[RMDB]
RNA sequence: GGGAACGACUCGAGUAGAGUCGAAAAGGGGUCAUUAGUGCCUCCUUGGAUUUACUUUUGACGAGCUGAAGCCUCCACGGCUCGAUAAGUUGUCAGGAGGCCUAAUGACGGAGGCACCCAAAAGGAUCCUUGAACAGUUCGCUGUUCAAGGAUCCAAGGCAUAUAUGUGGUUCGCCACAUAUAUGCCAAAAGAAACAACAACAACAAC
Reactivity to 2A3 in 0.01 (KOAc 150mM, MgCl2 10mM, bicine 150mM(pH8.5), 24C), signal-to-noise 1, nucleotides 027 to 156: g050g000g020g020u000c000a000u000u050a070g040u110g170c030c010u000c010c010u090u130g110g000a040u130u140u130a080c050u000u090u080u160g200a120c000g000a000g040c010u000g010a110a000g020c010c020u000c030c010a050c000g000g000c000u000c000g000a000u000a050a000g000u050u060g270u300c140a000g000g010a000g010g000c000c000u000a000a000u000g000a000c030g000g010a020g050g000c050a040c020c020c000a170a110a000a020g000g000a000u030c000c000u000u000g000a000a000c000a000g020u140u110c180g080c150u000g000u000u000c000a010a000g000g000a000u000c000c000a000a010